[RMDB]
RNA sequence: GGGAACGACUCGAGUAGAGUCGAAAAUAACAGUAAAUCUCUGGCACAGAUGCUAUUGGUCCUUAAUGUCCUGUGAUUUUAGGAAAUAGUUUGGAUUUAGUUUAAUUUAUUCAGAAAUCAAACAUGUUUAAUUAGGUUCACUGCUCUGGCAGAGUAACGUAAAUUAUCGGUUCGCCGAUAAUUUACGAAAAGAAACAACAACAACAAC
Reactivity to DMS in 0.01 (KOAc 150mM, MgCl2 10mM, bicine 150mM(pH8.5), 24C), signal-to-noise 2, nucleotides 027 to 156: u010a110a140c010a130g000u010a040a110a100u000c030u000c060u020g010g000c040a160c050a080g030a090u010g010c020u010a060u000u000g010g010u010c020c010u000u020a050a090u000g030u010c020c040u010g020u010g020a160u000u000u000u000a040g010g000a090a060a040u000a060g010u000u010u010g010g000a070u000u000u000a070g020u000u000u000a060a080u000u000u010a090u040u000c090a230g000a080a040a070u000c020a030a040a050c010a100u000g010u000u000u000a030a100u000u000a070g030g030u000u000c000a060c080u000g000c020u010c050u000g020g030c040a040g010a050g020u000a070a270
Reactivity to 2A3 in 0.01 (KOAc 150mM, MgCl2 10mM, bicine 150mM(pH8.5), 24C), signal-to-noise 4, nucleotides 027 to 156: u090a030a010c050a020g080u090a050a130a260u020c020u000c000u040g250g000c040a040c020a180g070a030u120g050c050u140a040u140u040g020g010u050c010c020u040u140a060a040u080g040u090c020c020u030g060u050g240a200u010u080u070u180a020g000g040a000a020a050u080a030g020u020u030u080g060g000a020u010u000u090a010g020u010u080u100a050a210u060u190u280a140u040u070c010a040g060a110a060a020u050c000a030a060a000c020a030u080g030u050u170u110a070a100u040u040a020g000g010u020u030c010a010c030u050g000c010u000c000u010g040g000c010a010g000a000g010u000a010a000
Conditions: 150 mM KOAc, 10 mM MgCl2 and 150 mM bicine (pH 8.5), 24 C. Chemical mapping of a 207-nucleotide RNA with DMS and 2A3. Values cover nucleotides 27 to 156. The DMS profile rests on 4,528 reads. It was measured as part of the RMDB library OK3TST.